[RMDB]
RNA sequence: GGGAACGACUCGAGUAGAGUCGAAAAGAUAUGGAGAAUUCUCCCUGUGGCGUUUGACGUAGCUCGGAAACGAGCUACCGAGCCACCUGGAGAACUCCUAAGUCAAACCACUGGUUCGCCAGUGGAAGUUUUACCCCUUGUUCGCAAGGGGUAAAACAAAAGAAACAACAACAACAAC
Reactivity to DMS in 0.01 (KOAc 150mM, MgCl2 10mM, bicine 150mM(pH8.5), 24C), signal-to-noise 1, nucleotides 027 to 126: g000a010u010a300u030g020g000a010g010a230a120u000u000c000u000c000c010c000u000g000u000g010g000c000g040u000u000u020g030a160c300g000u000a000g010c000u000c010g000g000a120a060a260c000g000a010g010c010u000a000c000c030g010a120g010c000c000a010c000c040u000g000g040a010g000a050a040c000u000c000c010u000a040a130g010u000c000a080a130a170c000c000a000c010u000g000g000u000u010c300g030c010c000a020g010u010g000g010a010a040
Reactivity to 2A3 in 0.01 (KOAc 150mM, MgCl2 10mM, bicine 150mM(pH8.5), 24C), signal-to-noise 1, nucleotides 027 to 126: g000a040u060a080u180g010g020a110g050a270a300u060u000c000u000c000c000c000u000g010u000g020g070c070g140u220u300u300g010a030c020g000u010a010g030c000u050c040g050g060a050a250a080c010g000a020g000c000u000a000c010c000g010a010g000c000c010a000c010c010u000g020g000a000g010a000a010c000u010c000c010u040a140a010g070u020c050a100a030a100c000c000a000c000u000g030g080u030u100c300g000c100c010a020g000u030g020g010a020a030